[RMDB]
RNA sequence: GGGAACGACUCGAGUAGAGUCGAAAACAGCUUCGUUCGCGAAGCUGAAAAAGCGUACUACUGUCCCAUGGCAAGCACGAUAAGGGUUCCCAAAUAGGAACCCUUUUGACGUGUGCCAGGGACAGUAUCGCAAAAAACGCGAGAUUCGUCUCGCGAAGAUCUACCAUGGAUUCGUCCAUGGUAGAUCAAAAGAAACAACAACAACAAC
Reactivity to 2A3 in 0.01 (KOAc 150mM, MgCl2 10mM, bicine 150mM(pH8.5), 24C), signal-to-noise 1, nucleotides 027 to 156: c000a000g000c000u000u000c000g090u020u070c100g020c020g100a000a000g000c000u000g010a010a010a010a020a000g040c030g090u120a120c060u020a000c000u050g000u000c010c000c030a260u000g000g000c040a010a150g020c000a000c000g030a000u000a030a010g010g000g010u000u000c000c020c040a060a200a000u250a070g000g010a000a000c000c010c070u000u000u000u090g020a020c000g000u040g010u020g010c000c000a020g000g000g000a010c000a000g000u000a000u010c000g000c000a100a150a010a020a000a010c000g000c020g000a020g000a030u020u100c180g050u000c150u000c000g000c000g020a040a010
Reactivity to DMS in 0.01 (KOAc 150mM, MgCl2 10mM, bicine 150mM(pH8.5), 24C), signal-to-noise 1, nucleotides 027 to 156: c010a000g000c010u000u010c010g050u000u020c290g040c040g040a040a010g060c000u030g010a010a070a070a040a250g000c000g030u010a130c100u000a030c010u010g010u030c030c000c010a140u000g020g000c000a030a190g020c000a050c020g020a270u010a010a020g000g010g030u000u000c000c000c020a050a170a290u000a020g010g000a010a020c020c000c000u010u000u000u000g000a150c080g010u010g010u000g010c030c040a160g030g010g020a020c020a010g000u000a000u000c010g030c000a020a040a070a090a080a090c010g000c000g010a030g040a110u000u000c300g020u000c000u000c000g030c010g000a040a100